[RMDB]
The data come from the RNA Mapping Database (RMDB), library OK1LIB.
Chemical mapping of a 177-nucleotide RNA with DMS and 2A3.
Reactivities are given for positions 27 through 126.
The reactions ran in a buffer of 150 mM KOAc, 10 mM MgCl2 and 150 mM bicine (pH 8.5), at 24 C.
2A3 adducts were read by reverse transcription with SuperScript II with manganese.
2A3 is a SHAPE reagent: it acylates the 2'-hydroxyl of flexible nucleotides of all four kinds.
RNA sequence: GGGAACGACUCGAGUAGAGUCGAAAACGAGGAAGUAGUGGUUUUGCCAGUGGUGGUAGUUCACCUUUAACUUUUAUACCUAAAAAUAGAAGAACUCCGUCAACUACAUCUGAAGGACGAAUGAGAGUAAUCCGGAGUGAUUCGUCACUCCGGAUUAAAAAGAAACAACAACAACAAC
Reactivity to DMS in 0.01 (KOAc 150mM, MgCl2 10mM, bicine 150mM(pH8.5), 24C), signal-to-noise 2, nucleotides 027 to 126: c080g010a190g020g000a000a070g050u000a020g020u000g040g010u000u000u000u000g040c010c070a070g020u010g020g000u020g000g000u030a050g000u010u000c060a050c050c020u040u020u000a040a030c070u000u010u010u010a100u040a100c130c110u020a030a110a040a070a110u010a060g000a080a060g010a080a020c030u010c030c020g010u000c000a070a080c020u020a060c090a090u000c120u000g050a110a070g010g000a110c040g000a040a090u010g010a090g020a110g000
Reactivity to 2A3 in 0.01 (KOAc 150mM, MgCl2 10mM, bicine 150mM(pH8.5), 24C), signal-to-noise 2, nucleotides 027 to 126: c100g030a030g080g030a090a040g000u150a060g020u070g160g000u010u010u020u300g080c040c020a030g070u060g070g130u050g030g010u010a010g010u030u090c010a050c000c000u010u010u110a030a070c010u060u060u000u020a100u090a080c000c040u100a050a080a050a030a080u210a000g210a160a010g020a080a040c010u000c000c010g010u050c010a100a060c040u130a030c050a050u010c020u070g130a060a080g030g040a010c040g020a050a010u130g010a050g000a000g050